[RMDB]
This 177-nucleotide RNA was probed chemically with 2A3 and DMS. For 2A3 the reverse transcriptase was SuperScript II with manganese. DMS adducts were read by reverse transcription with MarathonRT. The RNA was probed in 150 mM KOAc, 10 mM MgCl2 and 150 mM bicine (pH 8.5) at 24 C. It was measured as part of the RMDB library OK1LIB.
RNA sequence: GGGAACGACUCGAGUAGAGUCGAAAAGAAGAGAAUAUCGGUGUAAGUGCAGCCCGUCUUACACCGUAAGGCACAGCGGAAACGCUGAUGUGAAAUACAGGGCUGUGAGACGGAAGUAGACCGUCAACGGGAUGAUAAUGUUCGCAUUAUCAUCCCGAAAAGAAACAACAACAACAAC
Reactivity to 2A3 in 0.01 (KOAc 150mM, MgCl2 10mM, bicine 150mM(pH8.5), 24C), signal-to-noise 6, nucleotides 027 to 126: g160a030a000g130a010g050a090a080u150a050u280c010g010g000u000g010u010a000a000g010u020g060c010a000g000c010c000c000g010u010c000u000u000a000c000a000c000c000g010u030a010a040g090g000c000a000c000a010g000c000g010g030a040a070a000c020g000c000u010g030a160u010g040u000g050a080a020a000u220a040c100a050g000g010g000c010u010g010u040g030a100g000a000c010g010g000a130a050g060u200a050g080a110c000c000g000u000c010a000a030
Reactivity to DMS in 0.01 (KOAc 150mM, MgCl2 10mM, bicine 150mM(pH8.5), 24C), signal-to-noise 2, nucleotides 027 to 126: g000a090a040g050a170g000a060a060u040a070u040c000g000g000u010g010u000a000a000g000u010g000c040a010g070c000c010c010g010u000c000u000u020a010c000a040c000c010g000u000a000a020g000g010c010a010c010a000g010c010g010g000a110a070a210c000g020c020u000g030a040u010g020u000g000a130a040a150u070a050c130a120g000g000g000c010u000g000u020g000a090g000a030c000g000g000a150a070g000u040a080g060a140c000c000g050u000c000a070a080